Source: RMDB library OK3TST, as collected in RNAgym. This 207-nucleotide RNA was probed chemically with DMS and 2A3. For 2A3 the reverse transcriptase was SuperScript II with manganese. The reactions ran in a buffer of 150 mM KOAc, 10 mM MgCl2 and 150 mM bicine (pH 8.5), at 24 C.
RNA sequence: GGGAACGACUCGAGUAGAGUCGAAAAAAGCACAGUUGUAACCAAUCCUGGCCUUGAGCUUGGUAGGCCUCUACCAAAAGUACCAAAUGGCUUAGCUCAAAAGAAAUCAAGCAUCUACCAUAAAUGGUCAAUUGAUCAAUUGAGUAUGCUAGUGCCACGUAAGGGUCAGAUUCGUCUGACCCUUACGAAAAGAAACAACAACAACAAC
Reactivity to DMS in 0.01 (KOAc 150mM, MgCl2 10mM, bicine 150mM(pH8.5), 24C), signal-to-noise 1, nucleotides 027 to 156: a070a060g010c020a100c000a120g020u000u000g000u000a050a130c050c060a010a140u020c020c070u020g040g080c010c010u000u000g020a150g040c050u000u000g020g020u000a000g000g000c150c070u020c020u000a040c050c010a040a040a120a130g030u010a030c020c040a040a110a090u000g040g000c000u000u010a070g020c020u020c030a040a030a100a130g020a080a040a100u000c050a060a050g000c080a120u000c110u010a020c000c010a060u010a090a080a150u000g010g020u020c050a100a120u000u000g010a020u000c000a070a250u010u000g010a070g000u000a140u000g000c010u000a070g000u000g030c020c020a080
Reactivity to 2A3 in 0.01 (KOAc 150mM, MgCl2 10mM, bicine 150mM(pH8.5), 24C), signal-to-noise 3, nucleotides 027 to 156: a000a010g090c050a050c010a030g030u040u050g040u140a120a050c040c050a060a090u110c000c010u050g030g020c000c010u040u130g010a030g000c020u020u010g010g000u050a020g040g060c020c050u090c010u010a010c010c000a030a020a000a090g050u050a100c010c060a060a130a150u130g020g000c000u040u010a010g020c000u000c000a020a030a000a030g060a030a110a020u060c050a030a010g050c020a090u080c050u170a040c040c000a070u120a260a210a210u170g010g010u080c080a090a130u040u050g010a040u040c030a030a090u030u000g000a010g020u070a050u130g040c040u040a020g060u040g080c010c000a050